[RMDB]
RNA sequence: GGGAACGACUCGAGUAGAGUCGAAAACGGCUUUUGAUCAGACUGACGCAGAUGUCAGUAUCUAUUGCUUAGAUAAGAAAUGGGAAGCCGACAUCCAAAGAGCUAUAGACCUAAAGGAGUCCGUCACGGACUGAGUUAUUUUCGAAUAACUCAGUCCAAAAGAAACAACAACAACAAC
Reactivity to 2A3 in 0.01 (KOAc 150mM, MgCl2 10mM, bicine 150mM(pH8.5), 24C), signal-to-noise 5, nucleotides 027 to 126: c010g000g020c000u090u030u050u110g140a110u140c030a020g060a090c010u010g000a010c020g030c140a130g060a300u250g080u010c010a020g010u010a020u000c000u020a030u020u160g050c040u090u090a050g030a080u090a120a080g060a080a140a060u110g040g000g020a030a000g010c000c000g050a040c030a030u020c000c010a050a070a020g070a000g010c020u070a050u090a170g040a090c010c010u080a090a080a040g080g000a050g060u000c050c020g100u110c050a020c180
Reactivity to DMS in 0.01 (KOAc 150mM, MgCl2 10mM, bicine 150mM(pH8.5), 24C), signal-to-noise 5, nucleotides 027 to 126: c040g030g000c010u000u000u000u000g000a120u010c100a160g010a150c010u000g010a010c020g020c230a160g010a120u020g010u010c000a010g000u000a060u000c010u010a020u010u010g020c150u000u000a070g010a130u010a040a060g000a050a100a080u000g000g000g000a040a100g010c020c000g010a070c180a090u010c010c040a070a100a130g000a070g000c050u000a100u010a090g010a060c080c030u000a060a070a150g000g010a090g010u000c020c060g020u010c120a120c200